[RMDB]
The record gives the reactivity of an RNA of 207 nucleotides to 2A3 and DMS. 2A3 adducts were read by reverse transcription with SuperScript II with manganese. The RNA was probed in 150 mM KOAc, 10 mM MgCl2 and 150 mM bicine (pH 8.5) at 24 C. The DMS profile rests on 4,316 reads. It was measured as part of the RMDB library M2RFPK.
RNA sequence: GGGAACGACUCGAGUAGAGUCGAAAAUUGCGCUUGCCUAUUUAGGCAUACUUCUCAGGAUGGCGCGUUGCAGUCGAACAAGAUCCAGGGACUGUACAGAAUUUUCCUAUACCUCGAGUCGGGUUUGAAAACGUUAGGCACUUCGGUGCCUAACGAACUAUUCAUUAAGCUUCGGCUUAAUGAAUAGAAAAGAAACAACAACAACAAC
Reactivity to 2A3 in 0.01 (KOAc 150mM, MgCl2 10mM, bicine 150mM(pH8.5), 24C), signal-to-noise 6, nucleotides 027 to 156: u030u060g010c010g010c020u050u100g020c000c010u130a260u270u270u300a030g010g000c000a010u050a050c040u110u100c100u030c140a070g110g030a110u140g030g000c000g000c020g000u010u050g010c010a000g000u010c020g060a190a080c060a180a120g080a200u150c090c080a090g100g050g000a000c010u010g010u020a020c020a050g170a080a040u010u010u000u000c000c000u030a030u020a110c040c050u000c010g000a000g000u010c020g000g020g000u050u050u080g090a070a050a000a000c010g000u000u000a000g000g000c000a000c010u020u040c260g040g000u000g010c000c000u000a000a000c000g000a000a000
Reactivity to DMS in 0.01 (KOAc 150mM, MgCl2 10mM, bicine 150mM(pH8.5), 24C), signal-to-noise 2, nucleotides 027 to 156: u000u000g020c000g020c040u000u000g080c010c010u000a250u000u000u010a020g020g000c040a090u010a030c070u000u000c060u000c110a180g010g000a090u000g010g000c040g020c070g040u000u000g010c030a070g030u000c020g040a100a300c070a070a180g040a200u010c080c080a120g000g000g000a080c060u000g020u010a090c100a130g010a080a080u000u010u000u010c000c000u000a100u000a050c080c020u000c030g010a040g020u000c020g000g000g030u000u010u000g000a070a050a060a130c020g020u010u000a010g000g020c000a020c010u000u010c300g060g040u010g000c000c000u010a000a010c010g000a030a070